This 207-nucleotide RNA was probed chemically with 2A3. Reactivities are given for positions 27 through 156. It was measured as part of the RMDB library OK3TST. The RNA was probed in 150 mM KOAc, 10 mM MgCl2 and 150 mM bicine (pH 8.5) at 24 C.
[RMDB]
RNA sequence: GGGAACGACUCGAGUAGAGUCGAAAAAAUAUUAAUUCCAUUAUGCCAUAAACUUUUAUUUAUCAUGACAGCAAGUCAUAAAGUUCUCUUACUAGAAUAUAGCUUCUAAAUUGCAUAUCAUAGAUGAGAUACAACACACACAUUGGAUUCUAGCAGAGUCAGUAUCAGUCUUCGGACUGAUACUGACAAAAGAAACAACAACAACAAC
Reactivity to 2A3 in 0.01 (KOAc 150mM, MgCl2 10mM, bicine 150mM(pH8.5), 24C), signal-to-noise 1, nucleotides 027 to 156: a000a000u240a000u060u130a110a090u050u050c000c000a020u030u050a000u060g090c020c000a060u080a110a080a000c190u170u060u040u220a120u170u090u170a100u160c120a020u060g060a000c010a020g080c180a300a100g040u060c020a020u080a150a030a060g080u020u000c000u000c000u000u110a140c000u020a020g080a140a030u020a060u040a110g000c000u020u170c030u230a200a250a210u130u070g000c000a000u010a000u030c020a030u000a000g060a030u020g000a000g000a000u100a080c000a100a090c070a000c030a020c020a000c020a060u150u250g030g010a040u010u030c000u220a030g010c030a020g080a060